This 177-nucleotide RNA was probed chemically with DMS and 2A3.
The reactions ran in a buffer of 150 mM KOAc, 10 mM MgCl2 and 150 mM bicine (pH 8.5), at 24 C.
For DMS, 2,693 sequencing reads were counted.
For 2A3 the reverse transcriptase was SuperScript II with manganese.
Reactivities are given for positions 27 through 126.
It was measured as part of the RMDB library OK2TST.
[RMDB]
RNA sequence: GGGAACGACUCGAGUAGAGUCGAAAAAUGGGAGAGUGAGAGAACUUUUCAGCUGAAAGUGGAAGUUCGUGGUGUGGGGGUCACUGGAAGCUCUGCAGAAGUGUUUGCGGGAUACUGAGGGUGGGGACGCAUACUAUAGUUUCGACUAUAGUAUGCGAAAAGAAACAACAACAACAAC
Reactivity to DMS in 0.01 (KOAc 150mM, MgCl2 10mM, bicine 150mM(pH8.5), 24C), signal-to-noise 3, nucleotides 027 to 126: a080u010g000g010g020a080g000a120g000u000g010a130g020a190g000a040a020c050u010u000u010u020c030a070g030c100u000g020a080a100a170g040u000g000g000a010a060g020u000u010c050g010u000g000g010u000g020u010g000g000g000g020g010u010c090a030c040u000g010g000a140a060g030c080u010c050u000g010c070a080g000a100a130g010u000g000u000u000u000g000c060g000g030g000a090u000a060c090u010g010a070g020g000g010u010g010g000g010g020a130
Reactivity to 2A3 in 0.01 (KOAc 150mM, MgCl2 10mM, bicine 150mM(pH8.5), 24C), signal-to-noise 3, nucleotides 027 to 126: a030u090g020g000g000a090g010a020g040u100g020a100g000a010g000a030a000c000u060u070u120u160c080a070g040c090u180g170a220a120a030g080u060g000g000a030a000g000u020u050c010g010u060g030g040u120g020u100g040g010g010g010g060u070c060a020c090u010g000g010a040a020g000c020u040c020u120g000c030a020g000a230a020g050u040g090u140u020u070g030c030g030g000g020a030u090a160c040u070g020a080g000g050g060u210g010g000g010g010a000